[RMDB]
RNA sequence: GGGAACGACUCGAGUAGAGUCGAAAAGAAGAAAAUUAAUCUUGUUCAUGCCCUCAUUGAGGAGAACCAAUGAUUAAUAUAGCAGAAACGAUAAGUGAAUGACAUAGACAUCUCAAUUGGUUCAAAAACCCUCAUACCAGUUCGCUGGUAUGAGGGUAAAAGAAACAACAACAACAAC
Reactivity to 2A3 in 0.01 (KOAc 150mM, MgCl2 10mM, bicine 150mM(pH8.5), 24C), signal-to-noise 2, nucleotides 027 to 126: g080a010a000g190a000a210a010a010u090u080a030a060u040c000u040u000g030u110u010c040a060u300g060c020c000c000u060c090a300u030u240g100a040g050g030a020g000a030a020c000c000a010a090u110g000a000u010u000a050a040u020a050u180a120g000c000a000g180a220a030a010c070g000a040u180a300a040g000u020g110a120a060u030g030a080c010a020u090a000g110a080c020a030u040c020u010c050a000a110u050u000g000g000u000u000c000a020a000a000a000
Reactivity to DMS in 0.01 (KOAc 150mM, MgCl2 10mM, bicine 150mM(pH8.5), 24C), signal-to-noise 1, nucleotides 027 to 126: g000a090a110g000a080a020a050a050u040u030a000a080u000c060u000u000g000u010u000c070a000u030g000c100c000c030u010c030a270u030u000g070a040g000g020a170g020a040a020c040c040a010a030u000g000a040u000u000a040a210u000a000u000a020g040c060a010g000a160a160a060c000g040a120u040a030a090g000u000g000a160a120u000g020a010c000a010u040a000g000a120c160a030u010c080u000c090a010a120u000u000g000g000u010u000c070a020a050a020a040